[RMDB]
RNA sequence: GGGAACGACUCGAGUAGAGUCGAAAAUCAUCCCACUGUGUGCUUCAAAUAAACUUCGCGUUGUAAUUCCUGACUUCACCGUCUGGAAUCAGGUAGUCACAUAUCCCUCGCUUAACUACGCUGGGGCGGGUAAGUCUAACUUCGGUUAGACUUACCCAAAAGAAACAACAACAACAAC
Reactivity to DMS in 0.01 (KOAc 150mM, MgCl2 10mM, bicine 150mM(pH8.5), 24C), signal-to-noise 1, nucleotides 027 to 126: u010c170a120u000c080c000c000a200c200u000g010u010g000u000g000c000u010u000c010a050a070a120u000a100a050a080c010u000u010c080g000c130g050u000u000g050u030a050a080u000u000c020c000u000g000a020c060u000u010c300a090c300c160g000u020c040u000g010g020a000a010u000c070a060g000g000u000a000g000u010c060a050c040a030u000a110u000c020c000c020u000c180g020c050u000u000a100a120c100u000a040c130g000c070u000g000g020g000g050c300
Reactivity to 2A3 in 0.01 (KOAc 150mM, MgCl2 10mM, bicine 150mM(pH8.5), 24C), signal-to-noise 1, nucleotides 027 to 126: u080c000a030u010c000c040c000a020c030u100g010u010g050u060g050c000u030u030c030a050a070a280u220a100a090a000c010u020u090c050g010c080g040u010u120g060u040a000a050u040u010c000c010u000g010a010c010u050u050c090a030c010c020g000u010c030u010g030g020a000a040u040c010a010g040g070u050a040g060u120c010a010c010a050u070a070u120c000c000c010u000c000g020c000u040u010a100a020c050u050a020c090g040c060u000g000g000g000g100c010

Structure probing data (DMS and 2A3) for a 177-nucleotide construct. For DMS, 727 sequencing reads were counted. For DMS the reverse transcriptase was MarathonRT. The RNA was probed in 150 mM KOAc, 10 mM MgCl2 and 150 mM bicine (pH 8.5) at 24 C.